[RMDB]
Structure probing data (DMS and 2A3) for a 177-nucleotide construct.
RNA sequence: GGGAACGACUCGAGUAGAGUCGAAAACUGGUUCGGCGCGGACAAGAUGCUGACCGGCUACAUAGACGCCACGCCGAUCAGCUACGAGGCGGGGCAGGUGACGGUAUCGGUCAACGGCCGCAGCAAGGCCCCUGUCUUAGUUCGCUAAGACAGGGGCAAAAGAAACAACAACAACAAC
Reactivity to DMS in 0.01 (KOAc 150mM, MgCl2 10mM, bicine 150mM(pH8.5), 24C), signal-to-noise 2, nucleotides 027 to 126: c010u010g010g000u010u020c150g050g000c010g020c040g020g000a060c030a030a120g000a040u000g020c060u000g000a030c050c000g020g000c150u000a110c150a090u010a090g000a150c130g020c020c010a030c040g010c010c000g010a170u000c060a050g030c190u050a050c200g000a190g000g000c010g030g010g010g010c010a050g000g020u000g010a050c070g010g000u000a050u000c030g000g010u000c010a030a150c180g010g000c000c000g000c030a070g000c070a190a120g000
Reactivity to 2A3 in 0.01 (KOAc 150mM, MgCl2 10mM, bicine 150mM(pH8.5), 24C), signal-to-noise 1, nucleotides 027 to 126: c000u080g020g020u130u080c050g110g000c040g030c020g080g010a000c090a060a040g000a050u070g000c010u030g030a060c000c020g010g000c030u050a030c070a190u260a110g110a110c090g020c060c000a010c070g030c020c000g060a100u080c050a020g000c020u000a030c080g010a030g040g000c000g010g000g000g040c050a000g000g070u030g030a060c070g030g000u000a040u000c000g030g050u050c010a020a060c060g050g000c000c000g020c010a020g030c000a040a020g170
DMS adducts were read by reverse transcription with MarathonRT. For 2A3 the reverse transcriptase was SuperScript II with manganese. Source: RMDB library OK2TRN, as collected in RNAgym. The reactions ran in a buffer of 150 mM KOAc, 10 mM MgCl2 and 150 mM bicine (pH 8.5), at 24 C.